Description:
An RNA of 177 nucleotides, treated with 2A3 and read out base by base. It was measured as part of the RMDB library OK1LIB. For 2A3 the reverse transcriptase was SuperScript II with manganese.

RNA sequence: GGGAACGACUCGAGUAGAGUCGAAAAUAAUCAAGAUGAAUCGUUUUUAGUUUGCUUGCUUACCUUAUGGGCCAGCAUGAGAUCGACUUGAAUCUUUUUAUGUAGGCAGACAGCGACGGAAUUUAAACCGUGAGUACCGUUUCGACGGUACUCACGGAAAAGAAACAACAACAACAAC
Reactivity to 2A3 in 0.01 (KOAc 150mM, MgCl2 10mM, bicine 150mM(pH8.5), 24C), signal-to-noise 1, nucleotides 027 to 126: u170a000a010u190c040a150a000g000a010u300g110a020a300u030c000g120u000u220u000u030u000a040g030u010u030u010g010c000u000u020g000c000u010u020a040c000c000u130u220a110u300g030g000g000c060c080a000g000c000a000u010g010a000g000a060u040c000g070a080c120u030u060g000a020a010u080c000u000u140u000u000u000a120u000g120u040a000g070g000c000a000g020a000c000a000g020c000g020a040c030g060g040a060a030u000u130u100a130a040a000